[RMDB]
RNA sequence: GGGAACGACUCGAGUAGAGUCGAAAAUGUAUGCCAUUGCUUUGCAUAGCAUAUACGACAUUCCAGCAGACGAGUUCGGCGCGGCACUUUUAAGGAAAGAUGUACAUGUUUGUUAUGCCGCUUUCCACGUAAAGGCCUGAUUCGUCAGGCCUUUACGAAAAGAAACAACAACAACAAC
Reactivity to 2A3 in 0.01 (KOAc 150mM, MgCl2 10mM, bicine 150mM(pH8.5), 24C), signal-to-noise 2, nucleotides 027 to 126: u100g010u000a010u000g050c090c160a130u010u100g010c010u150u040u170g030c000a000u040a010g000c010a000u010a000u000a100c110g020a020c000a090u100u080c010c030a000g000c000a000g040a000c000g020a010g020u120u090c000g040g000c000g000c000g140g020c070a040c030u210u110u000u120a040a040g060g030a180a030a030g050a140u060g050u170a180c010a110u110g160u070u090u050g080u020u300a090u070g080c020c010g010c000u000u000u000c020c010a010
Reactivity to DMS in 0.01 (KOAc 150mM, MgCl2 10mM, bicine 150mM(pH8.5), 24C), signal-to-noise 2, nucleotides 027 to 126: u040g020u000a010u000g010c000c030a050u070u000g020c000u010u000u030g000c000a010u000a070g000c000a010u020a020u020a010c090g000a090c140a220u010u020c000c070a160g030c180a120g010a080c070g000a080g020u000u000c060g000g040c110g010c030g000g030c030a070c070u010u000u000u000a000a180g000g020a000a020a020g000a100u010g040u040a070c080a040u020g000u000u000u060g000u000u020a070u000g070c090c000g010c010u000u030u000c020c030a300